[RMDB]
RNA sequence: GGGAACGACUCGAGUAGAGUCGAAAACUCUUCUGCUUCGGCAGAAGAGAAAAUAACGCUGGCGUCGGACACAGCCGGAGCUAGCCUCAGAUAGUCUCAGUAAAAUCGGAUAGUUCGCUAUCCGAAACGUACAUGGUAAGUUCGCUUACCAUGUACGAAAAGAAACAACAACAACAAC
Reactivity to DMS in 0.01 (KOAc 150mM, MgCl2 10mM, bicine 150mM(pH8.5), 24C), signal-to-noise 5, nucleotides 027 to 126: c000u000c000u010u010c000u000g010c000u000u010c200g040g010c000a010g010a000a000g010a010g000a010a040a060a060u010a140a150c280g010c000u000g010g010c000g020u000c010g020g010a120c190a110c300a140g000c000c010g000g000a050g000c010u000a020g020c010c070u000c180a100g000a120u000a080g010u000c010u000c010a160g000u000a070a080a080a120u000c010g010g000a020u000a000g010u010u010c260g010c010u000a010u000c000c010g000a010a010a050
Reactivity to 2A3 in 0.01 (KOAc 150mM, MgCl2 10mM, bicine 150mM(pH8.5), 24C), signal-to-noise 4, nucleotides 027 to 126: c000u010c000u000u000c000u010g020c000u040u050c240g130g000c010a000g000a000a000g000a000g010a000a010a000a010u040a020a030c060g000c010u000g010g010c020g120u010c020g000g040a100c070a030c030a300g100c020c000g000g010a010g010c000u010a000g000c000c010u060c050a050g030a110u110a060g050u020c010u020c100a070g080u200a030a100a090a160u020c000g000g000a000u010a000g030u050u030c240g000c110u000a000u000c010c000g000a000a000a000